Structure probing data (DMS and 2A3) for a 177-nucleotide construct. The reactions ran in a buffer of 150 mM KOAc, 10 mM MgCl2 and 150 mM bicine (pH 8.5), at 24 C. For DMS the reverse transcriptase was MarathonRT. For DMS, 3,573 sequencing reads were counted. The 2A3 profile rests on 3,253 reads.
[RMDB]
RNA sequence: GGGAACGACUCGAGUAGAGUCGAAAAAGUCACCUUCAUUGGGAAUAAUACGGCCAUCCAGGAACUCUUCAAGCGUGUCUCAGAGCAGUUUACAGCAAUGUUCAGGCGCAAGGCCUUCCUCCAUUGGGCAACACUAUGAAUUCGUUCAUAGUGUUGCAAAAGAAACAACAACAACAAC
Reactivity to DMS in 0.01 (KOAc 150mM, MgCl2 10mM, bicine 150mM(pH8.5), 24C), signal-to-noise 4, nucleotides 027 to 126: a080g000u000c060a090c030c010u010u000c120a100u010u010g000g010g020a120a070u010a080a070u010a120c150g000g030c030c040a070u000c040c070a050g020g000a060a060c040u000c050u000u000c090a040a090g010c080g010u000g010u000c030u000c030a080g000a110g000c020a030g000u000u000u000a060c110a070g000c070a050a060u010g020u000u000c050a070g010g010c050g000c100a080a080g020g000c030c030u000u000c020c010u000c060c070a110u000u000g010g010
Reactivity to 2A3 in 0.01 (KOAc 150mM, MgCl2 10mM, bicine 150mM(pH8.5), 24C), signal-to-noise 3, nucleotides 027 to 126: a000g080u050c030a100c050c000u050u040c080a150u080u120g040g030g060a080a070u140a150a040u070a150c040g030g000c000c010a030u020c040c000a030g070g060a050a040c030u040c020u150u080c060a090a030g010c010g080u070g050u010c020u010c070a030g030a010g010c030a010g010u070u120u090a070c050a020g010c010a070a060u060g040u070u060c020a020g020g000c010g000c070a040a040g090g000c000c000u020u040c010c000u050c010c000a110u090u130g070g060